[RMDB]
RNA sequence: GGGAACGACUCGAGUAGAGUCGAAAAGAAUAUUCUUUGUUUAAAACAUUAAAAACAAAACAGACCAAAGCAUCAAGCAAGAAGUUUCCUGGCAAUAAACUAAGCACAGCAUUAUUUUUUAAGGAACCAGAGUUGUCAGAUUCGUCUGACAACUCUGAAAAGAAACAACAACAACAAC
Reactivity to 2A3 in 0.01 (KOAc 150mM, MgCl2 10mM, bicine 150mM(pH8.5), 24C), signal-to-noise 1, nucleotides 027 to 126: g020a140a030u070a130u210u030c000u100u030u030g020u010u130u090a040a060a000a000c020a020u050u280a130a240a000a000a000c000a030a080a030a000c030a000g010a000c000c020a020a010a020g050c030a030u190c020a080a030g030c000a070a040g030a150a000g030u000u080u020c000c000u000g080g050c000a000a000u030a230a040a060c030u030a180a000g000c020a000c050a110g000c100a030u000u100a120u160u150u000u020u050u230a000a100g060g000a010a020c000